Chemical mapping of a 207-nucleotide RNA with DMS and 2A3. It was measured as part of the RMDB library OK3TST. For DMS, 4,468 sequencing reads were counted. The 2A3 profile rests on 3,789 reads.
RNA sequence: GGGAACGACUCGAGUAGAGUCGAAAACACGCCGCUAACUUGAAACGUAACGAGGAGUUACAUGGCUUCCAGACUGCUGGACCCCGAUACCCUCGUCGAACUCGAAGGUGUUAACGGUGAGUGGUUCGACCUCACCAACGGCACCGAGGGGAUCUACCGCGUAUAUAAGUUUCGACUUAUAUACGCGAAAAGAAACAACAACAACAAC
Reactivity to DMS in 0.01 (KOAc 150mM, MgCl2 10mM, bicine 150mM(pH8.5), 24C), signal-to-noise 2, nucleotides 027 to 156: c030a060c050g000c010c010g040c050u000a060a050c050u000u000g010a150a080a110c090g060u000a010a070c020g000a090g010g010a210g000u000u010a110c110a090u010g030g030c040u000u000c020c020a070g010a250c130u010g000c030u000g000g010a060c090c000c000c010g010a120u000a030c010c000c000u000c000g070u000c040g000a060a170c070u000c030g010a110a130g000g000u000g000u000u010a070a090c120g030g000u010g000a050g050u000g020g010u010u020c100g000a070c040c000u010c000a020c040c010a040a100c050g010g010c010a070c060c010g020a150g020g000g020g010a170u000c020u000a150c150
Reactivity to 2A3 in 0.01 (KOAc 150mM, MgCl2 10mM, bicine 150mM(pH8.5), 24C), signal-to-noise 5, nucleotides 027 to 156: c060a010c060g030c000c010g020c110u080a090a030c020u050u100g090a100a070a070c050g050u070a030a010c010g010a020g100g040a160g050u050u040a050c040a090u060g020g010c010u050u020c000c020a150g070a270c100u190g050c020u020g250g000a050c020c000c000c000g020a040u080a110c000c000c000u000c000g030u020c040g050a050a050c020u020c090g100a140a030g000g000u010g010u030u090a090a010c080g000g000u000g000a010g000u160g030g160u130u170c100g090a160c020c020u000c000a000c000c010a020a030c060g010g000c000a000c000c000g000a020g000g000g010g000a020u020c010u040a060c060